[RMDB]
RNA sequence: GGGAACGACUCGAGUAGAGUCGAAAAAGGCAUGCAUACCUCUUUCAUCUGGAAGUGCACUGUUGACUCCCCAGGGAUGAGGAGACCUUCAAGUGACCUUAGGACUGUUAUAAACACAAUUGGCACGGAGUCUUUGCCACUUCAAUUUGCGCACAUCGCUAUACGGCCCUUUCGAGGGCCGUAUAGCAAAAGAAACAACAACAACAAC
Reactivity to 2A3 in 0.01 (KOAc 150mM, MgCl2 10mM, bicine 150mM(pH8.5), 24C), signal-to-noise 2, nucleotides 027 to 156: a000g030g010c070a010u130g050c000a040u050a150c020c000u040c090u060u110u070c040a190u010c000u030g000g000a090a000g070u010g110c110a020c040u020g040u080u060g010a070c000u020c040c010c000c000a010g000g100g000a040u070g010a030g010g000a020g040a090c010c000u020u050c060a110a030g000u090g050a190c000c000u040u000a040g070g040a010c010u000g020u060u120a190u200a120a200a000c070a000c090a130a290u100u020g000g000c040a040c090g020g000a020g000u040c000u080u010u030g040c070c010a020c000u030u100c090a100a150u120u030u180g140c080g020c000a020c010a070u070c060